[RMDB]
RNA sequence: GGGAACGACUCGAGUAGAGUCGAAAAAGCUGGAUUCGUCCAGCUAAAUCCUAAGUCUUGGCGUUUGACGUCGAUUGUCAGCUGUCAGUCGGAAACGACUGCUAGCUUGGAUUUAUCGACCGAGCCAAGAUAUGGAAAAGAUGCCAUUCGUGGCAUCCCCAAAGUCAUGAUUCGUCAUGACUUUGGGAAAAGAAACAACAACAACAAC
Reactivity to 2A3 in 0.01 (KOAc 150mM, MgCl2 10mM, bicine 150mM(pH8.5), 24C), signal-to-noise 6, nucleotides 027 to 156: a000g020c010u000g000g000a030u080u080c220g040u050c120c000a000g020c000u000a040a030a000u010c000c000u020a080a040g020u000c000u000u010g000g010c030g270u200u160u200g130a170c080g000u010c000g000a000u000u030g010u020c000a000g000c000u000g020u070c010a000g000u000c010g030g030a110a060a070c010g000a000c000u000g010c010u010a010g000c010u020u100g100g010a020u140u220u250a030u020c000g000a000c000c010g010a010g000c000c000a000a000g000a000u020a030u030g030g010a010a090a040a040g040a000u050g000c020c010a040u090u120c250g100u090g000g000c000a000u020c010
Reactivity to DMS in 0.01 (KOAc 150mM, MgCl2 10mM, bicine 150mM(pH8.5), 24C), signal-to-noise 2, nucleotides 027 to 156: a080g020c000u000g010g000a050u010u010c300g020u010c000c000a000g010c000u000a010a020a110u000c010c020u010a080a270g020u000c010u000u010g010g020c000g030u000u000u010g020a100c100g000u000c000g040a020u000u000g000u000c020a080g020c000u000g000u010c010a010g010u000c010g040g000a190a130a270c010g020a060c000u010g000c020u000a010g000c000u000u000g040g000a040u000u000u000a010u000c000g020a030c030c010g020a150g000c000c010a040a040g020a010u000a120u000g020g000a100a080a100a150g000a050u010g020c010c000a100u000u010c240g000u010g010g030c000a010u000c010

An RNA of 207 nucleotides, treated with 2A3 and DMS and read out base by base. Source: RMDB library RNAMAK, as collected in RNAgym. For DMS the reverse transcriptase was MarathonRT.